[RMDB]
RNA sequence: GGGAACGACUCGAGUAGAGUCGAAAAGGCGGGGAGGGCGGGGAGGAGUGUUACCCCACGGGAACUGCUGAGUGCCCCUGACGUCCAGACCCUCCCCCGUCCGGGAGAAUGGAGAUUCGGGAACGUGUAACACGCAUGUUCGCAUGCGUGAAAAGAAACAACAACAACAAC
Reactivity to DMS in 0.01 (KOAc 150mM, MgCl2 10mM, bicine 150mM(pH8.5), 24C), signal-to-noise 6, nucleotides 027 to 129: g000g000c080g000g000g000g000a010g040g020g000c140g010g010g010g000a050g040g010a070g040u030g000u040u060a060c010c040c020c000a140c170g030g020g000a120a110c000u030g020c120u000g040a010g040u030g040c040c020c010c040u010g000a090c180g020u030c040c050a060g000a180c100c040c000u030c030c000c020c030c050g000u050c060c070g000g000g070a090g040a140a000u000g060g010a060g020a090u010u000c090g000g000g000a030a070c070g030u050g030u070a040a140
Reactivity to 2A3 in 0.01 (KOAc 150mM, MgCl2 10mM, bicine 150mM(pH8.5), 24C), signal-to-noise 6, nucleotides 027 to 129: g030g020c070g000g020g010g010a060g010g000g000c040g020g030g000g010a020g020g020a070g010u100g030u030u140a110c000c010c000c010a040c050g020g020g010a050a030c020u050g030c040u080g170a050g060u110g020c020c000c000c010u020g000a010c050g060u050c030c010a040g010a110c010c000c000u020c010c000c000c000c010g040u030c000c020g000g020g000a020g000a050a040u120g020g000a020g000a040u080u070c020g000g000g000a060a020c040g060u090g030u120a110a030
An RNA of 170 nucleotides, treated with DMS and 2A3 and read out base by base.
The data come from the RNA Mapping Database (RMDB), library 15KLIB.
As a SHAPE reagent, 2A3 marks flexible, mostly unpaired nucleotides at the ribose 2'-OH.